Chemical mapping of a 207-nucleotide RNA with 2A3 and DMS. The RNA was probed in 150 mM KOAc, 10 mM MgCl2 and 150 mM bicine (pH 8.5) at 24 C.

RNA sequence: GGGAACGACUCGAGUAGAGUCGAAAAUACCGCAGGCCUGCGGUGCGGGAGUGUGGAGACCUGCCGUAAGCCGUGUUGUUUUGACAACCGGGAGAAAGCGUAUGCGGAGGCAGCGCUUUCAGGGUCUAAAAGUAUGGGAUCUUCGGAUCCCAUACAAUCAGAGUAUACACUUCGGUGUAUACUCUGAAAAAGAAACAACAACAACAAC
Reactivity to 2A3 in 0.01 (KOAc 150mM, MgCl2 10mM, bicine 150mM(pH8.5), 24C), signal-to-noise 3, nucleotides 027 to 156: u120a010c000c010g020c020a030g000g030c010c040u020g000c000g010g010u010g000c100g000g040g020a060g030u210g020u180g070g050a060g060a100c000c000u050g070c040c000g010u020a010a010g060c010c030g010u030g000u020u000g000u000u080u070u200g070a030c020a040a010c020c000g000g000g020a070g000a010a000a010g000c010g000u040a300u160g010c040g020g070a060g280g000c000a000g010c000g000c000u000u000u010c010a010g010g000g000u000c010u030a060a060a050a050g000u000a000u010g000g000g000a000u000c000u020u030c160g060g000a000u000c000c000c000a000u000a000c000a000a010
Reactivity to DMS in 0.01 (KOAc 150mM, MgCl2 10mM, bicine 150mM(pH8.5), 24C), signal-to-noise 1, nucleotides 027 to 156: u000a240c000c020g000c160a080g030g000c040c020u000g050c020g020g030u000g040c050g000g000g000a100g010u030g030u000g040g030a190g010a110c020c000u020g000c000c020g020u000a090a110g010c000c040g020u020g030u000u000g030u010u010u010u000g000a110c050a040a050c000c000g050g000g020a150g020a000a010a020g000c010g030u000a030u020g020c010g040g010a200g060g020c000a160g010c020g010c000u000u000u000c000a040g000g010g040u000c010u000a060a070a170a210g010u020a000u000g030g020g020a010u010c010u000u000c300g070g000a000u010c000c000c000a000u010a000c010a050a110
For 2A3 the reverse transcriptase was SuperScript II with manganese.
Reactivities are rounded to 0.1 and cut off at 0 and 3.
It was measured as part of the RMDB library M2RFPK.